An RNA of 177 nucleotides, treated with 2A3 and DMS and read out base by base. The RNA was probed in 150 mM KOAc, 10 mM MgCl2 and 150 mM bicine (pH 8.5) at 24 C. DMS adducts were read by reverse transcription with MarathonRT.
RNA sequence: GGGAACGACUCGAGUAGAGUCGAAAAGCAGCAAAGUGAGGUGAGAAUCCUUACCGCCGGAGGGGCUAGGGUUCCUUGGCAAUGUUCGUCAGCCAAGGGUUAGUCGAUCCUAAGGUCAGUCAUAAGUGAUAUUUACUACGUUCGCGUAGUAAAUAUCAAAAGAAACAACAACAACAAC
Reactivity to 2A3 in 0.01 (KOAc 150mM, MgCl2 10mM, bicine 150mM(pH8.5), 24C), signal-to-noise 9, nucleotides 027 to 126: g080c080a000g010c040a080a050a020g030u040g020a000g010g010u020g010a050g030a020a030u030c000c000u010u020a020c010c020g020c020c010g030g020a030g020g070g000g000c020u020a020g040g060g080u150u170c010c000u010u010g010g000c050a060a060u080g030u120u130c160g080u110c110a160g280c050c000a000a000g010g010g000u010u040a010g000u000c040g030a080u040c000c000u030a040a010g030g010u030c030a010g040u030c020a070u080a250a030g070u030
Reactivity to DMS in 0.01 (KOAc 150mM, MgCl2 10mM, bicine 150mM(pH8.5), 24C), signal-to-noise 7, nucleotides 027 to 126: g030c060a070g010c070a040a080a110g020u000g010a020g010g000u000g010a160g000a230a110u000c010c000u000u000a040c020c100g000c070c110g010g010a110g000g000g000g010c030u000a020g000g010g020u030u020c010c000u010u000g000g000c010a070a070u030g000u020u020c120g010u010c080a180g000c000c010a010a030g000g010g000u020u010a040g010u000c020g010a080u010c000c010u000a100a110g000g000u010c090a080g010u000c090a080u020a090a080g010u000